[RMDB]
RNA sequence: GGGAACGACUCGAGUAGAGUCGAAAAGUAAGAUGAUUCGUCAUCUUACGAACCCGAUGAAGCGGCACAUACCGAGCUUCAUACAUCUAUGAGUGCAAAUAAUGGCGCGUGGUUUCGACCACGCGAAUACUCUAAACCACUUCGGUGGUUUAGAGUAAAAAGAAACAACAACAACAAC
Reactivity to 2A3 in 0.01 (KOAc 150mM, MgCl2 10mM, bicine 150mM(pH8.5), 24C), signal-to-noise 3, nucleotides 027 to 126: g000u000a000a000g000a000u020g010a010u010u090c130g050u000c100a010u020c010u020u020a000c000g010a020a050c000c010c040g000a020u050g030a020a020g040c020g070g050c050a050c010a160u190a070c040c060g050a050g000c010u010u000c000a010u030a080c050a070u030c100u250a070u230g100a050g150u080g020c020a040a110a070u180a110a100u230g160g000c030g000c000g010u010g000g000u000u080u090c130g060a040c000c000a000c000g000c000g000a000a000
Reactivity to DMS in 0.01 (KOAc 150mM, MgCl2 10mM, bicine 150mM(pH8.5), 24C), signal-to-noise 3, nucleotides 027 to 126: g000u000a000a000g000a000u000g000a010u000u010c200g000u000c000a000u010c000u000u000a000c000g010a070a170c000c000c000g000a030u010g000a010a050g000c010g000g000c030a100c090a090u010a140c060c100g020a130g020c000u000u000c000a010u000a110c200a050u000c140u010a050u010g020a090g020u000g020c070a120a050a110u010a100a080u000g010g000c000g010c000g040u000g000g010u000u000u010c200g010a040c010c000a000c000g010c000g000a020a050